Structure probing data (2A3 and DMS) for a 177-nucleotide construct.
RNA sequence: GGGAACGACUCGAGUAGAGUCGAAAAUGGUGUUAAGUGGAAUAAGUGGAAAAAUAUACAUAUAUGUACAGGGGGCUACAUAUAUGUAUAUGCCCCCUCGGAUCAGUAUAAGUAGGUAUAAGGUGGACCUACUAGCCUAUUUCGAUAGGCUAGUAGGAAAAGAAACAACAACAACAAC
Reactivity to 2A3 in 0.01 (KOAc 150mM, MgCl2 10mM, bicine 150mM(pH8.5), 24C), signal-to-noise 3, nucleotides 027 to 126: u100g010g020u030g010u070u080a130a070g060u130g080g060a090a090u120a220a000g050u140g050g000a060a060a030a030a010u020a000u000a010c000a000u020a000u000a000u010g020u020a020c050a060g000g000g000g080g000c010u000a000c010a000u040a000u020a000u020g000u010a000u000a000u010g000c010c000c000c000c010u030c020g000g020a020u030c020a000g050u030a030u020a200a040g090u070a040g020g070u100a160u030a080a030g060g050u060g020g020a010
Reactivity to DMS in 0.01 (KOAc 150mM, MgCl2 10mM, bicine 150mM(pH8.5), 24C), signal-to-noise 3, nucleotides 027 to 126: u020g010g030u000g000u010u000a060a140g020u010g000g000a040a050u030a070a100g010u010g010g000a000a080a090a090a020u000a010u000a010c000a000u010a000u000a010u010g000u010a050c130a090g020g000g000g000g010c110u000a010c020a020u000a040u020a050u010g000u010a010u020a020u010g000c100c020c010c010c010u000c030g000g000a060u020c090a060g020u010a040u000a040a100g010u000a040g010g010u000a070u020a050a080g020g020u010g000g000a280